[RMDB]
RNA sequence: GGGAACGACUCGAGUAGAGUCGAAAACGGUUACGCCUUCUUUACCGUUAUCAAGGAAGGUACUCGGCCAUGCUAAGGGAAGCAUUAUUCCUUAGGCGCAUGUCGCCGCCCGCAUGGUGUGAGGGGAAAAAGUAUGCUGGGUUCGCCCAGCAUACAAGAUUAGCCUCUAGUUCGCUAGAGGCUAAUCAAAAGAAACAACAACAACAAC
Reactivity to 2A3 in 0.01 (KOAc 150mM, MgCl2 10mM, bicine 150mM(pH8.5), 24C), signal-to-noise 6, nucleotides 027 to 156: c000g000g020u030u040a020c060g030c000c000u010u000c010u010u030u050a020c020c020g230u120u110a030u080c070a010a000g040g000a000a000g010g010u020a040c020u010c000g020g000c000c000a000u010g010c010u080a070a080g020g000g000a030a020g020c090a160u130u110a140u150u170c010c010u030u060a050g000g000c010g010c040a150u230g140u270c010g000c020c000g020c030c040c000g000c000a010u000g000g020u070g160u140g040a030g040g020g010g080a010a080a010a030a020g010u000a000u010g000c000u000g000g020g010u050u040c050g080c020c000c000a000g000c000a000u000a000c000a000a000
Reactivity to DMS in 0.01 (KOAc 150mM, MgCl2 10mM, bicine 150mM(pH8.5), 24C), signal-to-noise 2, nucleotides 027 to 156: c020g010g010u000u000a020c030g020c000c000u000u010c000u000u000u010a060c010c010g020u020u000a040u010c130a020a030g000g000a030a000g010g000u000a050c010u000c000g050g010c000c000a020u010g010c000u010a130a130g040g010g000a040a070g000c210a160u000u000a160u000u000c010c000u000u000a060g030g040c000g000c040a120u000g020u010c000g030c030c010g020c080c040c090g000c010a030u000g000g030u000g010u000g010a050g000g000g060g000a080a060a070a120a180g020u000a000u000g000c010u000g000g020g020u000u000c300g000c000c000c000a000g000c020a000u000a000c000a050a110
The data come from the RNA Mapping Database (RMDB), library M2RFPK.
The record gives the reactivity of an RNA of 207 nucleotides to 2A3 and DMS.
For 2A3, 6,256 sequencing reads were counted.
Values cover nucleotides 27 to 156.
2A3 adducts were read by reverse transcription with SuperScript II with manganese.